[RMDB]
RNA sequence: GGGAACGACUCGAGUAGAGUCGAAAAGUAGCUGGCGGAGAUACCGUCAUAAGUGCCGGGUUCGUUGGCGAUCAGAUGCAGGCGAGUCUGCAUACCGGCCAUGGCAUAAAUCUGGCUACCCAGACGCCAUCAGUAGUGUCUUCGGACACUACUGAUGAAAAGAAACAACAACAACAAC
Reactivity to 2A3 in 0.01 (KOAc 150mM, MgCl2 10mM, bicine 150mM(pH8.5), 24C), signal-to-noise 3, nucleotides 027 to 126: g040u050a010g030c030u020g050g010c040g000g050a170g060a180u200a220c020c010g020u000c020a000u080a060a040g080u080g030c010c000g010g020g000u080u170c060g050u140u130g100g030c050g020a090u110c040a050g040a060u000g010c030a010g000g050c090g170a070g030u070c000u010g000c000a010u030a090c030c030g000g000c000c010a050u040g020g000c020a040u080a070a050a020u130c050u050g000g000c000u050a090c030c000c010a070g030a080c070g040c010
Reactivity to DMS in 0.01 (KOAc 150mM, MgCl2 10mM, bicine 150mM(pH8.5), 24C), signal-to-noise 3, nucleotides 027 to 126: g020u000a050g020c060u000g000g010c040g000g000a140g030a140u010a070c110c040g020u010c030a050u000a060a100g020u010g010c000c010g010g000g020u000u000c090g020u010u020g010g000c050g010a070u000c080a130g020a030u000g010c010a030g010g010c160g000a190g000u000c000u000g020c000a000u010a050c050c020g000g020c010c020a030u000g030g000c070a080u000a060a100a110u000c070u000g000g010c000u000a090c040c000c010a140g010a100c170g010c110
Source information: Source: RMDB library OK2TST, as collected in RNAgym. Chemical mapping of a 177-nucleotide RNA with 2A3 and DMS. Reactivities are given for positions 27 through 126. For DMS, 3,092 sequencing reads were counted. The RNA was probed in 150 mM KOAc, 10 mM MgCl2 and 150 mM bicine (pH 8.5) at 24 C.